An RNA of 177 nucleotides, treated with DMS and 2A3 and read out base by base. Values cover nucleotides 27 to 126. The reactions ran in a buffer of 150 mM KOAc, 10 mM MgCl2 and 150 mM bicine (pH 8.5), at 24 C. Values are in units of 0.01, from 0 to 300, in steps of 10. For DMS the reverse transcriptase was MarathonRT.
RNA sequence: GGGAACGACUCGAGUAGAGUCGAAAAUCUCUUCUAACGCGGUUAUAAUAUAGAACCGUAUUAAUGGUUGCAGCUUUUUCCUCUUCAUGGAAUCGGUAUAGAUUAUGUCGGGGAGACCGACAGCAUAGUUAUACUUUGUGUUCGCACAAAGUAUAACAAAAGAAACAACAACAACAAC
Reactivity to DMS in 0.01 (KOAc 150mM, MgCl2 10mM, bicine 150mM(pH8.5), 24C), signal-to-noise 3, nucleotides 027 to 126: u010c010u000c000u020u010c130u010a030a080c100g020c010g000g000u000u000a070u010a140a140u020a190u010a100g010a040a020c010c010g020u000a060u000u000a050a080u000g010g010u000u000g010c060a190g000c050u000u000u000u010u000c010c020u000c090u010u010c080a070u000g010g000a030a040u000c050g000g020u000a060u000a090g000a050u000u010a080u010g010u000c030g020g000g000g030a100g010a170c040c010g000a040c030a040g010c110a060u000a090
Reactivity to 2A3 in 0.01 (KOAc 150mM, MgCl2 10mM, bicine 150mM(pH8.5), 24C), signal-to-noise 3, nucleotides 027 to 126: u020c000u030c000u060u030c060u060a090a030c050g030c010g010g070u000u060a110u050a300a190u240a090u050a230g070a070a010c000c000g000u020a070u020u130a030a040u080g090g020u060u070g020c060a020g040c050u000u060u000u060u050c000c000u070c030u110u050c040a080u090g120g060a050a040u030c020g010g030u170a100u090a120g060a030u150u060a030u140g000u010c010g010g000g010g000a110g030a050c000c000g020a020c000a010g000c000a040u080a100